[RMDB]
RNA sequence: GGGAACGACUCGAGUAGAGUCGAAAAGGCAUUCUCCACCUCAGCUUUUUAUGUGGGGCCAAAGACUACAUUGCAACAAUUUGUUGAUCAAUAUGUUGAGGGUGUAGUAUGUCACAUCAGUAAAAUGGAUUCCUUCCUUAUUCGUAAGGAAGGAAUCAAAAGAAACAACAACAACAAC
Reactivity to DMS in 0.01 (KOAc 150mM, MgCl2 10mM, bicine 150mM(pH8.5), 24C), signal-to-noise 6, nucleotides 027 to 126: g000g010c010a050u000u010c010u000c040c010a050c000c010u000c040a050g000c020u000u000u010u000u020a030u020g010u000g000g000g010g010c060c200a100a100a140g010a070c010u000a010c010a010u000u040g010c010a010a010c020a090a240u020u010u010g020u000u020g010a100u020c140a050a040u020a040u010g000u000u000g010a060g000g010g030u010g000u000a010g000u000a020u010g010u000c010a090c110a070u010c090a110g020u020a050a070a080a080u020g010
Reactivity to 2A3 in 0.01 (KOAc 150mM, MgCl2 10mM, bicine 150mM(pH8.5), 24C), signal-to-noise 9, nucleotides 027 to 126: g010g000c000a000u050u000c010u020c020c000a020c000c000u010c010a010g020c020u110u130u040u100u080a040u070g030u020g000g000g050g000c070c060a120a120a010g080a020c010u010a010c010a010u030u060g040c000a010a010c020a090a270u120u160u280g020u020u050g020a090u140c030a040a070u100a060u230g010u010u010g010a060g020g100g030u020g000u000a000g000u000a020u020g020u010c010a040c020a130u120c030a020g120u250a040a060a060a080u160g090